[RMDB]
RNA sequence: GGGAACGACUCGAGUAGAGUCGAAAAAUAAAUCCGGGUCCCGUCAGACAAGGAGGAGGAGGGAACUUUCUAGGGAAACCACUCCCUCAAACCUUCUCUUCCGAAAAAGAGGGAGGAAAGAAAAAAACUUUUAACUAACGUUCGCGUUAGUUAAAAGAAAAGAAACAACAACAACAAC
Reactivity to DMS in 0.01 (KOAc 150mM, MgCl2 10mM, bicine 150mM(pH8.5), 24C), signal-to-noise 1, nucleotides 027 to 126: a080u000a000a050a100u000c010c030g000g060g030u000c000c000c020g000u050c030a110g000a210c170a160a050g020g020a010g010g000a000g000g000a000g020g030g000a090a130c270u000u010u000c170u030a080g000g010g000a070a050a090c250c040a130c150u000c020c030c030u000c110a050a050a170c000c000u000u000c000u000c010u000u000c000c000g000a020a120a040a110a090g000a150g020g010g030a040g000g000a070a080a060g000a000a000a070a060a130a030a120